The record gives the reactivity of an RNA of 177 nucleotides to 2A3 and DMS. For 2A3 the reverse transcriptase was SuperScript II with manganese. Source: RMDB library OK2TRN, as collected in RNAgym.
[RMDB]
RNA sequence: GGGAACGACUCGAGUAGAGUCGAAAAGCGUAUUACGGCAGGAGGACCUGCAUUUGGCGUUCGCCUCCGGCGCCGGCAACAAGAUCAUCCUGUUUGGCGCGCGCACCGGGCUCGACGGUAUCGGCGGCGCCGAUCAAAUAUUCGUAUUUGAUCGGCGAAAAGAAACAACAACAACAAC
Reactivity to 2A3 in 0.01 (KOAc 150mM, MgCl2 10mM, bicine 150mM(pH8.5), 24C), signal-to-noise 8, nucleotides 027 to 126: g020c020g010u090a080u190u270a110c060g020g000c020a010g010g030a050g040g050a100c030c030u060g030c060a040u110u050u110g050g000c030g020u060u070c050g030c020c010u020c030c020g030g000c020g000c000c000g020g020c010a030a040c020a030a050g030a140u120c020a040u040c040c020u020g080u080u080u140g080g000c040g000c010g000c000g000c030a030c010c020g020g050g000c040u040c060g040a040c020g010g060u090a070u140c020g020g000c000g030g030
Reactivity to DMS in 0.01 (KOAc 150mM, MgCl2 10mM, bicine 150mM(pH8.5), 24C), signal-to-noise 9, nucleotides 027 to 126: g010c040g020u010a110u000u010a120c090g010g010c040a040g010g010a090g010g010a070c050c030u000g020c080a130u000u010u000g020g010c040g020u010u000c110g000c010c010u000c040c040g010g010c030g020c080c010g010g000c070a050a060c130a070a080g000a100u000c090a100u000c030c020u000g000u000u000u010g020g010c060g010c060g000c050g010c130a150c040c020g010g000g000c040u000c040g010a070c040g010g000u000a140u000c040g010g010c050g010g010

Reactivities are given for positions 27 through 126.